[RMDB]
RNA sequence: GGGAACGACUCGAGUAGAGUCGAAAAUGCAGGGUGCGGCUUCCACCAUACCCAGGAGCAGCUGGCCUUGGAAGUGAGCCAUGUGACCUGCCUUCCGGGCAGACCCCUAGCGGAGCUGAGCAUGGUGGAAGACCAACCUAUUCGUAGGUUGGUCUUCAAAAGAAACAACAACAACAAC
Reactivity to 2A3 in 0.01 (KOAc 150mM, MgCl2 10mM, bicine 150mM(pH8.5), 24C), signal-to-noise 2, nucleotides 027 to 126: u110g020c010a050g060g020g010u150g100c040g070g030c000u060u100c030c040a090c030c020a050u150a150c000c040c030a020g030g030a040g000c100a000g010c050u050g010g020c000c040u020u170g010g050a080a050g080u140g220a030g000c020c010a030u090g060u070g070a090c000c030u030g040c020c000u060u010c040c050g000g030g000c000a020g020a120c030c000c020c020u040a020g010c070g040g050a040g020c050u050g030a010g010c030a020u010g020g000u050g090
Reactivity to DMS in 0.01 (KOAc 150mM, MgCl2 10mM, bicine 150mM(pH8.5), 24C), signal-to-noise 3, nucleotides 027 to 126: u010g020c050a060g010g000g020u000g020c080g030g000c020u000u010c040c040a080c030c030a060u000a080c050c020c020a070g000g010a110g010c090a150g010c040u000g010g010c030c020u010u020g020g000a060a060g000u010g000a180g010c020c030a070u000g020u020g010a110c110c020u000g010c020c020u010u000c040c060g000g010g000c010a050g000a220c030c000c020c050u000a080g010c110g020g020a110g010c020u000g000a090g000c030a030u000g000g020u000g000
Record summary:
This 177-nucleotide RNA was probed chemically with 2A3 and DMS. The RNA was probed in 150 mM KOAc, 10 mM MgCl2 and 150 mM bicine (pH 8.5) at 24 C. For 2A3 the reverse transcriptase was SuperScript II with manganese. For 2A3, 1,845 sequencing reads were counted. 2A3 is a SHAPE reagent: it acylates the 2'-hydroxyl of flexible nucleotides of all four kinds. The DMS profile rests on 3,907 reads.